The data come from the RNA Mapping Database (RMDB), libraries RFM100 and RFMREP. This 177-nucleotide RNA was probed chemically with 2A3 and DMS. Conditions: 150 mM KOAc, 10 mM MgCl2 and 150 mM bicine (pH 8.5), 24 C. For DMS the reverse transcriptase was MarathonRT.
RNA sequence: GGGAACGACUCGAGUAGAGUCGAAAAAGUUUUGGAAGAUCAAUAUUACUCGCCUUUUACUCUUCUUUCGUUUUGAAGGAAAUAUGAGUGAAAUCAGAAGGACAAUCGUCGUUUUGAUGAUAUACCUAUAUAGGUGCUCAUUCGUGAGCACCUAUAUAAAAGAAACAACAACAACAAC
Reactivity to 2A3 in 0.01 (KOAc 150mM, MgCl2 10mM, bicine 150mM(pH8.5), 24C), signal-to-noise 2, nucleotides 027 to 126: a000g140u070u020u000u070g130g010a100a050g010a080u070c060a100a080u040a070u180u200a100c060u000c020g050c010c000u050u010u020u040a030c000u000c000u090u010c020u010u050u040c030g070u030u020u230u300g020a000a000g010g040a010a000a030u220a080u220g000a000g030u040g020a060a000a000u040c020a030g010a020a000g010g040a000c050a010a130u030c100g040u000c110g010u040u010u090u210g020a010u000g000a000u040a000u070a070c000c010u000
Reactivity to DMS in 0.01 (KOAc 150mM, MgCl2 10mM, bicine 150mM(pH8.5), 24C), signal-to-noise 1, nucleotides 027 to 126: a090g020u000u010u000u000g010g010a110a060g000a130u030c040a040a050u050a050u050u000a100c060u000c060g000c080c070u010u010u010u030a050c020u010c040u000u000c000u000u010u010c000g050u020u020u020u100g020a030a000g000g020a010a020a100u000a040u010g020a000g050u000g000a030a070a010u010c080a040g000a030a040g020g010a050c020a020a130u020c100g000u010c000g000u000u000u000u000g000a020u000g000a100u010a070u000a070c010c040u000